[RMDB]
RNA sequence: GGGAACGACUCGAGUAGAGUCGAAAAUGCCGGCCGCCGCCUAUGACGUCAUCGUCUGCAACCCGCCCUACGUCAACCAGGCCUCGAUGGGCGCCCUGCCCCAGGAAUACCGCCACGAGCCGGCGCAUGCGGGCUCGUGAUUCGUCACGAGCCCGCAAAAAGAAACAACAACAACAAC
Reactivity to DMS in 0.01 (KOAc 150mM, MgCl2 10mM, bicine 150mM(pH8.5), 24C), signal-to-noise 2, nucleotides 027 to 126: u010g010c050c000g030g000c040c060g010c120c040g010c030c020u000a080u000g020a040c040g010u000c120a080u010c070g010u000c040u020g010c090a120a150c110c040c010g000c020c020c020u010a050c080g040u010c040a030a130c110c100a080g010g000c030c040u010c070g000a140u010g010g020g010c030g000c100c010c000u010g010c020c020c020c130a150g000g000a120a050u010a110c300c010g000c020c070a080c020g000a110g010c010c010g000g010c000g000c120a030

Conditions: 150 mM KOAc, 10 mM MgCl2 and 150 mM bicine (pH 8.5), 24 C. Structure probing data (DMS) for a 177-nucleotide construct. For DMS the reverse transcriptase was MarathonRT. The DMS profile rests on 1,427 reads.